[RMDB]
RNA sequence: GGGAACGACUCGAGUAGAGUCGAAAAAGGCUUUGGCGGGGCAUUUAUUGAGGGAAUUCAGGGUGAUCCGCAUGGAGUUCUUGGGAUUAGCUUGCCGCUACUAAGGCAGAUGGUUUGCGAUUUUGGGGGCAUGCAUAUGAUUCGUCAUAUGCAUGCCAAAAGAAACAACAACAACAAC
Reactivity to DMS in 0.01 (KOAc 150mM, MgCl2 10mM, bicine 150mM(pH8.5), 24C), signal-to-noise 1, nucleotides 027 to 126: a080g020g020c060u000u010u010g010g010c060g020g000g000g010c060a030u020u010u010a090u040u020g000a090g000g020g020a100a090u000u020c070a050g010g010g010u010g000a080u000c050c060g000c080a130u010g000g010a070g020u000u010c030u000u000g020g000g010a100u010u000a080g000c050u010u000g020c040c030g010c080u000a080c130u010a090a090g030g020c010a030g000a050u000g000g010u000u010u000g020c070g010a160u000u000u000u020g000g010g020
Source: RMDB library OK2TST, as collected in RNAgym. This 177-nucleotide RNA was probed chemically with DMS. DMS adducts were read by reverse transcription with MarathonRT. Reactivities are given for positions 27 through 126. For DMS, 1,717 sequencing reads were counted.